This 177-nucleotide RNA was probed chemically with 2A3 and DMS. For DMS the reverse transcriptase was MarathonRT. The RNA was probed in 150 mM KOAc, 10 mM MgCl2 and 150 mM bicine (pH 8.5) at 24 C. Reactivities are rounded to 0.1 and cut off at 0 and 3. 2A3 adducts were read by reverse transcription with SuperScript II with manganese.
[RMDB]
RNA sequence: GGGAACGACUCGAGUAGAGUCGAAAACCGACAGCCGGGCGCGCUUUCGCGAUCGCGCGGGCGGUGGUGCAUGGCCGCUCCCAGCCCGUGGCGCGAGCCGUCUGCUCCAUUGCGACAACGAGCGAGAGCGAGUGACAAAGUUCGCUUUGUCACUCGCAAAAGAAACAACAACAACAAC
Reactivity to 2A3 in 0.01 (KOAc 150mM, MgCl2 10mM, bicine 150mM(pH8.5), 24C), signal-to-noise 9, nucleotides 027 to 126: c000c000g030a080c060a010g040c050c020g020g000g000c010g010c020g000c020u100u150u080c030g010c020g080a120u110c040g000c010g000c000g150g000g000c010g000g020u110g000g030u040g010c100a230u240g170g040c110c020g000c020u040c000c020c000a030g010c000c010c000g010u040g020g000c010g000c000g000a010g010c000c000g010u010c010u010g000c000u000c010c020a150u090u200g020c040g030a050c040a140a030c080g050a040g070c020g020a050g000a000
Reactivity to DMS in 0.01 (KOAc 150mM, MgCl2 10mM, bicine 150mM(pH8.5), 24C), signal-to-noise 5, nucleotides 027 to 126: c010c020g010a140c110a080g000c060c020g020g000g000c030g000c110g030c030u020u010u010c020g020c040g000a130u010c060g000c060g000c040g000g000g040c000g000g020u020g020g000u000g010c030a120u030g020g000c080c050g010c010u000c080c010c030a210g030c020c020c040g000u020g000g000c020g000c020g000a060g000c030c020g000u030c040u000g000c050u010c050c080a090u010u020g000c030g000a060c110a100a130c110g000a110g000c050g000a100g000a180